[RMDB]
RNA sequence: GGGAACGACUCGAGUAGAGUCGAAAAGCGCCGGAGGGGCCGCCGCCCCCCAGCUUCGGAUCCCCAGACCCUGGCGCGGCUCGCUGCGGGACCAUGGCUUCCUGGGACUCUUACCUGCCCGGAGCGGGGAGAGUAGAGUCUUCGGACUCUACUCUCCAAAAGAAACAACAACAACAAC
Reactivity to 2A3 in 0.01 (KOAc 150mM, MgCl2 10mM, bicine 150mM(pH8.5), 24C), signal-to-noise 1, nucleotides 027 to 126: g030c080g010c060c020g030g030a100g060g000g000g000c040c040g000c030c000g000c000c000c010c010c010c000a010g050c000u040u000c060g080g020a200u190c000c000c000c000a030g060a140c000c010c070u040g050g020c020g000c000g030g000c030u010c030g040c010u020g010c000g030g020g050a040c010c010a070u120g030g000c020u070u070c070c010u000g020g000g060a100c000u050c050u070u130a170c010c030u050g000c030c030c000g040g010a000g050c020g000g090